[RMDB]
RNA sequence: GGGAACGACUCGAGUAGAGUCGAAAAGAAAGAAAGAAAGCCCACAUCAGAUUUCCUGGUGUAACGAAUUUACAAGUGCUUCUUGCAUAAGCAAGUUCAUCCCGGUCAUCCCCAUGGCCGGGAUUAAAUCUCUCAAGAAUUUCGAUUCUUGAGAGAUAAAAGAAACAACAACAACAAC
Reactivity to DMS in 0.01 (KOAc 150mM, MgCl2 10mM, bicine 150mM(pH8.5), 24C), signal-to-noise 3, nucleotides 027 to 126: g010a170a110a170g000a190a080a150g000a210a170a170g020c030c030c060a050c040a020u000c000a020g000a300u020u020u020c210c000u010g020g000u010g000u020a050a090c130g010a070a030u000u020u020a090c070a050a280g000u000g000c010u000u020c100u000u010g000c010a040u000a030a290g010c050a010a030g010u010u000c020a090u000c010c010c000g000g000u000c010a000u030c050c030c030c070a260u000g000g000c000c000g000g000g000a020u000u010a010a080
This 177-nucleotide RNA was probed chemically with DMS. High DMS reactivity at an A or C suggests that its Watson-Crick edge is free. DMS adducts were read by reverse transcription with MarathonRT. Values cover nucleotides 27 to 126. Source: RMDB libraries RFM100 and RFMREP, as collected in RNAgym. The RNA was probed in 150 mM KOAc, 10 mM MgCl2 and 150 mM bicine (pH 8.5) at 24 C. Values are in units of 0.01, from 0 to 300, in steps of 10.